[RMDB]
RNA sequence: GGGAACGACUCGAGUAGAGUCGAAAAGCGAAUGGUUCGCCAUUCGCAAAAAAGCGUACUACGACGGCUGCCAUCGAUCCUCCCCACCUAGUCCCAAAUAGGACUAGAGGGGGAGGCAACCGUCGUAUCGCAAAAAAUGUCCUCUUCGGAGGACAAAUAGAACUUAACUGUUCGCAGUUAAGUUCUAAAAAGAAACAACAACAACAAC
Reactivity to 2A3 in 0.01 (KOAc 150mM, MgCl2 10mM, bicine 150mM(pH8.5), 24C), signal-to-noise 2, nucleotides 027 to 156: g020c000g000a000a000u000g010g040u020u130c100g040c100c000a000u000u000c010g020c000a140a070a000a000a020a020g040c050g050u120a100c040u000a020c000g010a000c000g010g000c030u060g010c020c080a200u280c220g090a050u110c020c000u010c010c010c020c000a080c000c020u000a000g000u000c000c020c030a090a290a070u300a060g010g000a000c000u000a000g000a060g020g000g000g000g000a000g000g000c000a000a000c000c000g010u000c010g000u000a000u020c000g000c000a000a000a180a000a000a000u060g000u000c000c050u020c010u040u040c260g120g000a000g000g000a000c000a010a000a000
Reactivity to DMS in 0.01 (KOAc 150mM, MgCl2 10mM, bicine 150mM(pH8.5), 24C), signal-to-noise 1, nucleotides 027 to 156: g050c000g050a020a020u010g020g000u010u010c300g030c040c000a040u040u020c010g050c000a020a000a040a090a060a070g020c000g060u000a090c210u010a050c010g030a000c030g010g000c010u000g030c080c110a300u010c160g000a270u000c040c050u050c000c000c000c010a030c010c000u000a000g000u000c010c000c030a040a160a240u000a030g000g030a050c000u000a000g040a030g000g060g010g030g010a010g010g000c010a000a000c000c010g000u000c010g000u000a010u020c020g000c010a020a000a090a070a090a130u000g010u000c000c000u000c010u000u010c280g090g000a030g000g010a010c000a010a070a060
Background
The record gives the reactivity of an RNA of 207 nucleotides to 2A3 and DMS. The reactions ran in a buffer of 150 mM KOAc, 10 mM MgCl2 and 150 mM bicine (pH 8.5), at 24 C.